[RMDB]
RNA sequence: GGGAACGACUCGAGUAGAGUCGAAAAGGGGUCCUUCGUUGACGGUCCUGGAGCGACGAUCUAUACUGAAGCCUCCACGGUAUAGGGAGCUCCUGGACUAUCAGAAGGACGGAGGCACCCAAAGCCCCUGCUUCUCGUUCGCGAGAAGCAGGGGCAAGUUAUAGCCUACGUUCGCGUAGGCUAUAACAAAAGAAACAACAACAACAAC
Reactivity to 2A3 in 0.01 (KOAc 150mM, MgCl2 10mM, bicine 150mM(pH8.5), 24C), signal-to-noise 1, nucleotides 027 to 156: g000g020g040g020u060c020c060u000u000c000g130u110u050g010a000c020g000g020u020c010c020u060g000g000a000g000c000g300a300c000g000a010u000c000u000a000u000a030c000u020g030a110a010g010c000c000u000c000c000a010c010g020g000u000a000u000a000g010g000g000a000g000c000u000c010c000u010g000g000a000c000u000a010u010c000a010g010a000a000g010g000a000c010g000g000a000g000g000c000a030c000c000c010a060a060a010g020c000c000c000c000u000g000c000u000u000c030u000c010g000u110u020c300g010c030g130a010g010a000a000g000c000a000g000g020g000g000c000a000a000